[RMDB]
An RNA of 207 nucleotides, treated with 2A3 and DMS and read out base by base.
The RNA was probed in 150 mM KOAc, 10 mM MgCl2 and 150 mM bicine (pH 8.5) at 24 C.
The data come from the RNA Mapping Database (RMDB), library OK3TST.
High DMS reactivity at an A or C suggests that its Watson-Crick edge is free.
The 2A3 profile rests on 494 reads.
High 2A3 reactivity points to a flexible backbone, as in loops and unpaired stretches.
RNA sequence: GGGAACGACUCGAGUAGAGUCGAAAAAUUGUAACAAGUCCUUCUCUUGUUCUUUAGGACUUAAGUGAGUUUAAAGAGAUGACAACAUGUGUUUUCCCCAGGUAAGCUUUCUUUGAGGAUUUGUCUUUCUUUUAAAAAAGUUGGCUGGGCACGGUGAUAAUUACGCUAUAUUCGUAUAGCGUAAUUAAAAAGAAACAACAACAACAAC
Reactivity to 2A3 in 0.01 (KOAc 150mM, MgCl2 10mM, bicine 150mM(pH8.5), 24C), signal-to-noise 1, nucleotides 027 to 156: a000u180u090g020u060a100a050c020a080a080g010u000c000c000u140u010c010u060c010u070u130g030u180u050c050u120u140u100a060g000g020a020c000u040u040a050a070g040u040g080a060g000u030u080u100a050a000a030g050a020g000a020u090g020a020c030a060a030c030a100u080g030u000g080u040u020u060u080c010c010c000c010a000g050g070u010a050a000g010c020u020u050u000c000u040u200u070g010a010g050g000a030u010u080u120g000u020c000u000u070u000c000u000u100u040u150a030a120a000a000a000a000g020u050u060g010g000c030u040g020g000g070c050a000c000g000g080u060g000a020
Reactivity to DMS in 0.01 (KOAc 150mM, MgCl2 10mM, bicine 150mM(pH8.5), 24C), signal-to-noise 2, nucleotides 027 to 156: a100u010u000g010u000a120a120c070a050a080g000u000c000c020u000u000c020u010c040u000u010g000u000u000c040u010u010u010a090g050g030a040c010u000u000a060a160g010u000g010a140g030u000u000u000a060a070a070g000a070g000a110u010g010a100c030a060a060c070a090u000g030u010g020u010u000u000u000c030c000c020c040a090g020g010u000a080a100g000c030u000u000u010c000u010u010u000g000a070g020g010a050u000u000u000g000u000c100u000u000u000c010u000u000u020u000a010a050a050a040a030a070g010u000u000g000g000c000u000g020g010g020c060a050c060g010g010u010g000a210